[RMDB]
RNA sequence: GGGAACGACUCGAGUAGAGUCGAAAAGAUAUGGAUACAGCAACAGCUACACGUGUCGGAAACGACAUGUAGACAUGCUGAUCCUAAGUCAAACUCGACUGAGUCGGUUCGCCGACUCAGUCGAGAACUACGAUUGUUUGUUCGCAAACAAUCGUAGAAAAGAAACAACAACAACAAC
Reactivity to DMS in 0.01 (KOAc 150mM, MgCl2 10mM, bicine 150mM(pH8.5), 24C), signal-to-noise 1, nucleotides 027 to 126: g010a030u000a270u000g000g010a000u010a190c070a030g010c000a050a140c280a130g000c000u010a000c030a070c110g000u000g010u000c010g050g030a040a060a150c000g000a010c000a040u000g010u000a010g010a070c090a140u000g000c020u010g010a070u000c000c000u000a020a160g000u000c060a140a110a140c010u000c000g020a010c000u000g000a030g000u000c020g010g030u000u020c190g000c000c000g020a010c000u030c010a000g000u000c000g000a000g000a020a090
Reactivity to 2A3 in 0.01 (KOAc 150mM, MgCl2 10mM, bicine 150mM(pH8.5), 24C), signal-to-noise 1, nucleotides 027 to 126: g040a000u070a030u120g040g010a040u300a300c000a010g040c020a020a150c030a150g100c010u060a010c060a020c160g170u050g020u010c000g070g000a030a080a040c020g000a000c000a000u030g000u010a000g040a050c070a040u030g000c000u030g000a000u000c000c000u040a130a010g040u030c040a030a050a140c000u000c000g030a000c000u010g040a020g070u100c140g000g000u030u020c270g090c010c000g020a020c000u000c030a000g040u020c000g020a000g000a010a010

Chemical mapping of a 177-nucleotide RNA with DMS and 2A3. For 2A3 the reverse transcriptase was SuperScript II with manganese. Conditions: 150 mM KOAc, 10 mM MgCl2 and 150 mM bicine (pH 8.5), 24 C. The DMS profile rests on 923 reads. Source: RMDB library TTRDEL, as collected in RNAgym.